[RMDB]
RNA sequence: GGGAACGACUCGAGUAGAGUCGAAAACUGACAUACGGCUGCUGAAGCCUUCUGUCAAGAACAUCCACGUCCCCUACACCCAAGCAGUAUCAGGGUAUGAAAUGUGGAAGAACAACUCAGGACGACCUGAGACUUUCCUAUUCGUAGGAAAGUCUCAAAAAGAAACAACAACAACAAC
Reactivity to 2A3 in 0.01 (KOAc 150mM, MgCl2 10mM, bicine 150mM(pH8.5), 24C), signal-to-noise 2, nucleotides 027 to 126: c000u010g010a010c000a000u040a000c040g030g000c010u020g000c060u180g090a040a000g000c000c000u010u000c000u000g000u010c020a010a020g070a050a020c030a050u020c000c000a010c000g100u090c010c010c010c000u080a050c070a050c070c000c000a140a010g030c090a060g110u020a030u170c030a000g000g000g030u000a060u150g060a040a050a020u130g000u020g040g020a040a040g060a040a050c050a000a040c030u030c050a020g070g010a010c030g080a080c020c030
Reactivity to DMS in 0.01 (KOAc 150mM, MgCl2 10mM, bicine 150mM(pH8.5), 24C), signal-to-noise 4, nucleotides 027 to 126: c070u000g000a020c010a030u000a080c230g000g000c000u000g020c260u010g000a210a020g000c010c000u000u000c180u000g000u000c010a070a080g020a080a110c190a150u000c000c010a030c030g010u000c040c010c000c060u000a060c120a070c030c000c020a130a090g010c160a130g030u010a120u000c160a120g030g000g030u010a100u000g000a030a050a050u010g020u000g010g000a030a050g010a130a130c090a070a070c050u000c030a050g000g010a110c070g000a130c100c110